An RNA of 207 nucleotides, treated with 2A3 and DMS and read out base by base. For DMS the reverse transcriptase was MarathonRT. The reactions ran in a buffer of 150 mM KOAc, 10 mM MgCl2 and 150 mM bicine (pH 8.5), at 24 C. It was measured as part of the RMDB library OK3TST.
RNA sequence: GGGAACGACUCGAGUAGAGUCGAAAAAGAAUCGCGAUAUGCUUCUGCGGACAAGAUAUGUUCUGACUUGUUGGAAAAUGCUUUGGGUGAGUUGUCCAUGCAUGGACCGGAGGUUUGGGACAUGUGGAGUCCCAUAGUGCGCGAAACAAUGCGCCGCACAUAGGAGGCUGUUCGCAGCCUCCUAUGUAAAAGAAACAACAACAACAAC
Reactivity to 2A3 in 0.01 (KOAc 150mM, MgCl2 10mM, bicine 150mM(pH8.5), 24C), signal-to-noise 3, nucleotides 027 to 156: a000g080a030a030u030c030g000c000g070a120u070a100u300g030c060u040u120c120u100g080c130g030g000a000c010a010a040g000a070u030a010u000g000u000u010c000u010g000a000c000u070u030g150u160u080g200g020a000a010a030a000u010g000c080u120u070u060g020g060g000u140g150a300g130u220u250g030u240c020c010a020u000g000c000a000u000g010g000a010c000c000g010g030a000g000g030u070u170u290g010g000g000a000c000a000u000g000u000g000g010a010g000u000c010c000c000a010u030a000g040u050g030c000g000c000g040a070a030a000c030a030a100u100g030c040g050c010c050g080c000
Reactivity to DMS in 0.01 (KOAc 150mM, MgCl2 10mM, bicine 150mM(pH8.5), 24C), signal-to-noise 1, nucleotides 027 to 156: a120g020a100a140u010c030g020c020g010a140u010a110u000g020c020u000u010c020u000g000c100g080g020a060c020a050a300g000a100u000a070u000g040u000u000c020u000g000a020c060u000u020g000u000u000g020g020a030a160a180a080u000g030c000u010u000u000g010g010g010u000g000a150g050u000u000g010u000c010c030a160u000g140c060a040u040g020g020a300c050c010g070g000a060g030g030u000u000u000g020g040g010a020c000a000u000g010u000g010g000a300g020u000c000c000c010a060u000a050g060u000g070c010g010c020g030a100a000a050c130a020a140u000g020c080g000c020c030g000c240